[RMDB]
The data come from the RNA Mapping Database (RMDB), library OK1LIB. Structure probing data (DMS and 2A3) for a 177-nucleotide construct.
RNA sequence: GGGAACGACUCGAGUAGAGUCGAAAACAUGAAUGCUCGGCAUCUUUUAGCACGGGUAGGUCGGGUAGCAAGCGUGUAAAGCAUGCUCAGCUUUUUGGGCUAAAGGGAAGAGAGCUGGGCGUACUGACUGGUACUCUUCAUUCGUGAAGAGUGCCAGAAAAGAAACAACAACAACAAC
Reactivity to DMS in 0.01 (KOAc 150mM, MgCl2 10mM, bicine 150mM(pH8.5), 24C), signal-to-noise 5, nucleotides 027 to 126: c070a090u060g000a090a050u020g000c020u000c010g000g020c010a090u020c080u000u010u020u010a070g030c040a090c030g000g000g000u010a030g000g010u010c070g010g010g010u000a050g010c090a100a100g000c050g000u010g000u020a060a080a080g020c040a070u010g000c000u000c010a020g000c020u000u010u020u010u000g000g000g010c060u010a030a120a110g010g010g010a140a100g000a060g000a040g000c000u000g010g000g010c030g010u020a030c030u010g000a250
Reactivity to 2A3 in 0.01 (KOAc 150mM, MgCl2 10mM, bicine 150mM(pH8.5), 24C), signal-to-noise 7, nucleotides 027 to 126: c040a050u090g080a090a040u070g020c000u000c010g010g000c000a080u020c090u020u110u020u060a020g000c030a020c030g000g010g010u020a020g010g050u060c010g000g000g020u020a010g030c040a050a010g040c030g020u040g030u090a070a060a000g030c010a010u030g000c000u000c010a000g000c000u030u030u010u040u030g030g020g000c010u050a070a030a030g050g010g010a020a020g030a010g000a000g020c000u000g000g000g000c010g010u030a040c020u020g090a010
Notes
DMS adducts were read by reverse transcription with MarathonRT. 2A3 adducts were read by reverse transcription with SuperScript II with manganese. The RNA was probed in 150 mM KOAc, 10 mM MgCl2 and 150 mM bicine (pH 8.5) at 24 C.